[RMDB]
RNA sequence: GGGAACGACUCGAGUAGAGUCGAAAAGAUAUGGAAUCGGUACGUGUGAACUACAGCUAAGGGAGAGGUUAUCGGAAACGAUAACUACCCACCUCCCGAAAGCUGCACACGUACCGAUUCCUAAGUCCGAGUUAUCACACUUCGGUGUGAUAACUCGAAAAGAAACAACAACAACAAC
Reactivity to DMS in 0.01 (KOAc 150mM, MgCl2 10mM, bicine 150mM(pH8.5), 24C), signal-to-noise 1, nucleotides 027 to 126: g010a140u000a300u000g000g000a000a000u000c000g030g010u000a010c020g010u000g020u000g000a120a020c100u020a300c000a000g000c000u010a080a300g000g000g000a050g010a090g010g000u010u000a040u000c020g020g000a150a040a220c000g010a000u000a040a000c000u000a080c100c080c210a300c130c000u000c000c000c000g040a040a080a020g060c000u000g000c020a000c010a000c010g000u000a000c020c010g000a000u000u000c000c000u010a010a170g000u050c060